[RMDB]
RNA sequence: GGGAACGACUCGAGUAGAGUCGAAAACCUCAACGUUCGCGUUGAGGAAAAAAUCCUAAGUCUGCCACUAUUUGUCAGUCCUGUAUCGGAAACGAUAUGGGACUUGGAUUUAACGAAUGGCAGAUAUGGAAAAAACCUCGCUGUUCGCAGCGAGGAACAUAGUAAACGAGUUCGCUCGUUUACUAUGAAAAGAAACAACAACAACAAC
Reactivity to 2A3 in 0.01 (KOAc 150mM, MgCl2 10mM, bicine 150mM(pH8.5), 24C), signal-to-noise 3, nucleotides 027 to 156: c000c000u010c000a010a000c010g040u060u090c260g000c000g070u000u000g000a000g000g000a080a020a040a000a000a060u030c020c000u030a080a000g020u000c000u000g010c000c000a040c030u110a090u110u040u060g080u010c010a010g000u000c010c010u000g010u010a000u000c000g030g050a170a050a050c020g000a000u000a010u030g020g010g000a000c000u000u010g020g000a010u020u050u190a070a030c060g040a170a130u020g000g000c000a000g000a000u020a020u030g000g000a050a030a000a050a030a050c000c010u000c000g000c000u020g050u050u060c260g010c130a000g000c000g000a000g000g000a000a000
Reactivity to DMS in 0.01 (KOAc 150mM, MgCl2 10mM, bicine 150mM(pH8.5), 24C), signal-to-noise 2, nucleotides 027 to 156: c010c000u000c000a000a000c010g000u000u010c300g020c030g050u000u000g020a040g040g020a040a000a040a070a070a060u010c010c010u020a070a300g000u000c020u000g030c000c010a030c030u000a160u000u010u010g010u010c030a040g000u010c000c020u000g040u010a010u000c010g030g000a190a120a220c000g030a020u000a000u010g010g030g010a000c000u020u010g000g030a070u000u000u000a080a080c090g010a040a020u010g000g010c000a000g030a010u000a180u000g030g020a000a010a120a100a070a080c000c000u000c000g040c000u020g010u010u000c300g020c020a030g010c020g020a010g010g000a000a050